The data come from the RNA Mapping Database (RMDB), library M2PK50. The record gives the reactivity of an RNA of 177 nucleotides to DMS and 2A3. Reactivities are given for positions 27 through 126. For DMS, 3,570 sequencing reads were counted. Values are in units of 0.01, from 0 to 300, in steps of 10. DMS (dimethyl sulfate) methylates the pairing face of unpaired adenines and cytosines.
[RMDB]
RNA sequence: GGGAACGACUCGAGUAGAGUCGAAAAAUCCUGCCCUUCGGGGCAGGAUGCAGCUUCGCUCUUGAGAGCGCGACUUAAGAGGAAUCCCAACGCGCAGAUGCACUAUUUCUCAGUUCGCUGAGAAAAACCAUAAAUUAUUAUUCGUAAUAAUUUAUGGAAAAGAAACAACAACAACAAC
Reactivity to DMS in 0.01 (KOAc 150mM, MgCl2 10mM, bicine 150mM(pH8.5), 24C), signal-to-noise 4, nucleotides 027 to 126: a020u000c000c000u000g010c000c000c010u000u010c200g020g000g010g010c010a010g000g000a000u000g010c200a150g010c190u000u010c030g010c010u000c010u000u010g010a070g000a080g020c000g010c040g010a300c000u000u000a040a060g020a030g010g000a070a070u010c010c000c020a120a090c100g010c050g010c050a140g000a080u020g020c080a110c130u000a120u010u000u000c000u000c000a010g010u000u020c150g030c010u010g000a000g010a000a000a030a120a140
Reactivity to 2A3 in 0.01 (KOAc 150mM, MgCl2 10mM, bicine 150mM(pH8.5), 24C), signal-to-noise 3, nucleotides 027 to 126: a000u000c000c000u000g010c000c010c020u020u080c260g050g010g010g000c020a010g000g000a000u010g010c030a030g030c060u070u040c030g010c030u000c000u100u160g050a080g010a020g120c010g010c010g060a230c020u030u020a020a010g010a010g060g030a020a060u020c010c020c010a030a060c050g030c000g020c020a030g050a180u140g070c060a030c090u110a230u070u060u040c000u000c000a020g030u030u080c140g010c060u010g000a010g000a030a010a000a010a000